[RMDB]
RNA sequence: GGGAACGACUCGAGUAGAGUCGAAAAGAUAUGGCUAUGGGUGGUUCAACAAACACGGUACUGCAUACGUUAGCCAUUGCCAAUGAAGCUGGUAUUGAUUAUGACUUAGAGCGCAUUAAUGCUAUUGUGUAGCGUAGUACUUCGGUACUACGCUACAAAAAGAAACAACAACAACAAC
Reactivity to DMS in 0.01 (KOAc 150mM, MgCl2 10mM, bicine 150mM(pH8.5), 24C), signal-to-noise 3, nucleotides 027 to 126: g010a130u010a020u000g010g030c010u030a050u000g000g020g030u000g040g010u000u000c030a080a070c230a050a060a090c200a150c230g020g000u000a040c040u000g010c050a080u010a140c090g000u000u000a030g010c000c010a030u000u010g020c020c040a050a100u020g010a060a110g000c120u010g000g000u010a040u000u000g010a050u000u000a060u000g010a020c020u000u010a110g010a120g000c100g030c110a010u000u020a040a080u000g020c050u000a080u000u020g000
Reactivity to 2A3 in 0.01 (KOAc 150mM, MgCl2 10mM, bicine 150mM(pH8.5), 24C), signal-to-noise 2, nucleotides 027 to 126: g020a020u100a000u080g020g000c000u040a020u070g000g050g030u020g000g030u020u040c040a060a060c030a120a280a020c070a080c110g040g080u090a070c030u030g000c020a070u060a250c020g050u000u020a000g000c020c000a010u000u040g000c000c000a010a040u130g070a070a030g040c100u030g000g000u060a030u090u000g040a040u000u190a060u160g040a030c030u100u120a130g020a040g110c050g000c030a010u070u060a110a000u090g030c010u060a080u090u260g060